[RMDB]
RNA sequence: GGGAACGACUCGAGUAGAGUCGAAAAGAGCAAUCUUCCGUUCGCUACACUAGAUCUUGAUACCACCUUUAGUUCGUUUAAACACGUUCUUGAUAGUAUCUUUUUAUUAACCCAACGCGUAAAGCGUUGAAACUUUGGGUCAAUUUGAUCAUGGCAAGGGAGAACUUAAGUUCGCUUAAGUUCUCCCAAAAGAAACAACAACAACAAC
Reactivity to DMS in 0.01 (KOAc 150mM, MgCl2 10mM, bicine 150mM(pH8.5), 24C), signal-to-noise 2, nucleotides 027 to 156: g000a120g020c100a100a110u000c020u000u000c030c040g020u010u000c090g020c030u010a070c080a090c070u000a100g020a050u000c030u000u010g000a070u000a050c020c010a030c040c020u000u000u000a040g010u010u000c060g010u010u000u000a130a120a180c180a040c040g010u000u000c000u000u010g010a030u010a050g000u000a030u000c000u000u020u030u010u000a070u030u010a040a030c070c010c000a060a050c060g030c010g020u000a090a090a230g010c030g060u010u000g010a060a060a060c040u000u000u010g000g020g040u020c020a030a080u000u000u000g010a040u010c010a120u000g020g010c050a060a290
Reactivity to 2A3 in 0.01 (KOAc 150mM, MgCl2 10mM, bicine 150mM(pH8.5), 24C), signal-to-noise 6, nucleotides 027 to 156: g070a010g040c060a060a100u010c020u070u020c030c010g040u060u110c070g010c050u090a040c040a060c080u070a040g010a050u030c020u040u060g000a010u040a120c020c040a080c040c060u060u120u060a020g000u010u030c000g010u030u030u100a100a130a010c050a000c020g020u030u010c010u050u030g040a050u030a110g000u020a030u030c000u040u100u040u030u080a150u080u100a050a030c020c010c020a000a000c010g010c000g090u110a110a070a140g000c010g000u010u010g020a010a010a010c040u120u120u090g030g000g010u010c000a020a120u050u070u230g030a010u030c030a040u010g050g000c040a080a100